[RMDB]
RNA sequence: GGGAACGACUCGAGUAGAGUCGAAAAGUUGUACGCAUCCCAUCCAUCGAGGGCAUUGAGGUCGACUUCAUCGUCGGCGUGGGCUUGGGGGAUAACGAUUCGCUUGACGACGACACCCUGCGUCGUGCGCAGGGAGCUCGUUCGCGAGCUCCCUGCGAAAAGAAACAACAACAACAAC
Reactivity to DMS in 0.01 (KOAc 150mM, MgCl2 10mM, bicine 150mM(pH8.5), 24C), signal-to-noise 2, nucleotides 027 to 126: g020u010u000g030u000a070c050g020c090a180u000c040c000c010a100u010c090c030a080u010c110g000a150g010g010g020c060a110u000u010g000a070g040g050u010c040g010a020c030u000u020c260a080u000c230g000u000c020g030g010c020g050u020g020g000g010c050u010u000g020g000g010g010g010a080u030a000a060c040g000a120u010u000c090g010c060u000u000g000a120c030g000a060c000g000a110c090a080c020c000c020u010g010c010g000u000c020g030u000g000
Reactivity to 2A3 in 0.01 (KOAc 150mM, MgCl2 10mM, bicine 150mM(pH8.5), 24C), signal-to-noise 1, nucleotides 027 to 126: g030u000u060g160u090a050c090g020c010a100u140c010c020c030a000u010c070c000a140u090c010g120a130g030g000g080c100a110u050u220g090a060g130g080u040c050g000a110c000u190u000c050a140u120c000g070u000c060g020g060c020g020u030g000g000g030c060u080u110g020g000g000g010g010a030u070a000a000c000g120a160u050u180c070g000c010u020u110g070a000c000g020a000c010g000a000c000a030c100c000c000u000g010c000g000u020c000g050u090g000
Chemical mapping of a 177-nucleotide RNA with DMS and 2A3.
Conditions: 150 mM KOAc, 10 mM MgCl2 and 150 mM bicine (pH 8.5), 24 C.
Reactivities are given for positions 27 through 126.
It was measured as part of the RMDB library OK2TRN.
For DMS the reverse transcriptase was MarathonRT.
2A3 adducts were read by reverse transcription with SuperScript II with manganese.